[RMDB]
RNA sequence: GGGAACGACUCGAGUAGAGUCGAAAAAUGAACGUGGUGGGCGUAAGUUAGUAGAAGAUCUAAUGGUACGCGGUGGGUUUUCGACUGUACUCGAAACCACCAGCACCACCAAGUCGUUCCCACCGAAUAUACUCAGAUCAUUCGUGAUCUGAGUAUAAAAAGAAACAACAACAACAAC
Reactivity to DMS in 0.01 (KOAc 150mM, MgCl2 10mM, bicine 150mM(pH8.5), 24C), signal-to-noise 5, nucleotides 027 to 126: a070u010g010a030a030c060g010u010g000g020u000g000g010g010c020g010u010a150a300g010u000u000a010g020u010a090g010a140a110g010a100u000c000u000a010a020u000g010g020u000a020c040g010c020g010g030u000g000g000g010u000u000u000u000c010g020a020c030u000g010u000a010c040u000c010g000a060a050a080c020c000a010c010c000a080g020c100a060c010c000a020c020c050a060a010g010u000c000g000u000u000c000c000c000a090c140c140g010a100a120
Reactivity to 2A3 in 0.01 (KOAc 150mM, MgCl2 10mM, bicine 150mM(pH8.5), 24C), signal-to-noise 5, nucleotides 027 to 126: a010u300g010a020a010c030g030u020g000g010u010g000g010g010c000g010u010a040a010g010u010u020a010g010u040a040g060a300a020g030a070u040c000u010a010a010u030g260g040u070a010c000g000c010g000g010u010g000g010g000u020u010u030u080c000g000a000c020u090g070u190a020c010u000c010g000a050a000a010c010c000a000c010c000a020g080c050a020c000c000a000c000c000a010a000g010u010c000g010u000u000c000c000c000a000c010c020g020a070a010